[RMDB]
RNA sequence: GGGAACGACUCGAGUAGAGUCGAAAAUGGCGUAGAAGCGCGUACCGACCAAUACCCCGGCGGCGCCCAACAUCAACGCGGCGGCAAGGCCCCGGCCGUCGGCGAUGCCCCCGGCGGCGAUCACCGGGACAUGUACCGUAUUCGUACGGUACAUGUCAAAAGAAACAACAACAACAAC
Reactivity to 2A3 in 0.01 (KOAc 150mM, MgCl2 10mM, bicine 150mM(pH8.5), 24C), signal-to-noise 5, nucleotides 027 to 126: u110g050g000c030g010u050a030g050a280a040g070c020g000c010g060u050a070c000c030g050a070c000c010a070a040u130a190c010c000c010c000g030g010c020g020g000c000g020c010c010c010a050a070c020a090u120c020a030a060c030g010c010g040g000c010g000g010c020a050a080g080g020c000c000c000c030g000g000c000c000g000u010c000g020g000c010g020a020u100g030c020c000c000c010c000g050g000c020g010g010c010g020a060u060c020a020c040c000g040g010
Reactivity to DMS in 0.01 (KOAc 150mM, MgCl2 10mM, bicine 150mM(pH8.5), 24C), signal-to-noise 4, nucleotides 027 to 126: u010g010g000c000g010u000a090g030a100a090g020c030g010c030g020u010a120c060c070g000a110c090c050a080a110u050a130c100c010c010c020g000g010c040g020g000c040g000c010c000c060a140a100c110a100u030c080a070a110c120g020c040g000g000c000g000g020c010a040a060g000g010c000c010c010c060g000g010c010c000g020u000c000g000g040c070g000a080u000g000c070c000c040c020c010g000g000c120g020g000c020g000a080u010c040a070c020c000g000g000